Chemical mapping of a 177-nucleotide RNA with 2A3. 2A3 adducts were read by reverse transcription with SuperScript II with manganese. The 2A3 profile rests on 1,026 reads.
RNA sequence: GGGAACGACUCGAGUAGAGUCGAAAAUCGUCGGCAGCGGUGCCGCGCGUCGGCGCGACAUGCACUGCACAUCGGCUCUGGAGAACACCCUCGGGUGCCACCUGAUGUGAGCUGUCCUGCUUGGCGUUCCGGUACGAGGUUUCGACCUCGUACCGGAAAAAGAAACAACAACAACAAC
Reactivity to 2A3 in 0.01 (KOAc 150mM, MgCl2 10mM, bicine 150mM(pH8.5), 24C), signal-to-noise 2, nucleotides 027 to 126: u050c010g040u000c000g010g000c000a070g030c050g100g030u000g020c010c010g010c020g000c000g110u300c170g150g050c000g000c000g010a030c010a020u130g000c020a000c010u090g020c000a000c000a000u030c000g000g000c000u000c000u030g030g000a060g020a040a000c000a030c030c030c000u060c170g010g000g010u000g050c010c000a110c050c000u010g000a000u010g000u000g010a020g030c070u030g090u040c040c000u020g010c000u130u230g000g000c000g020u040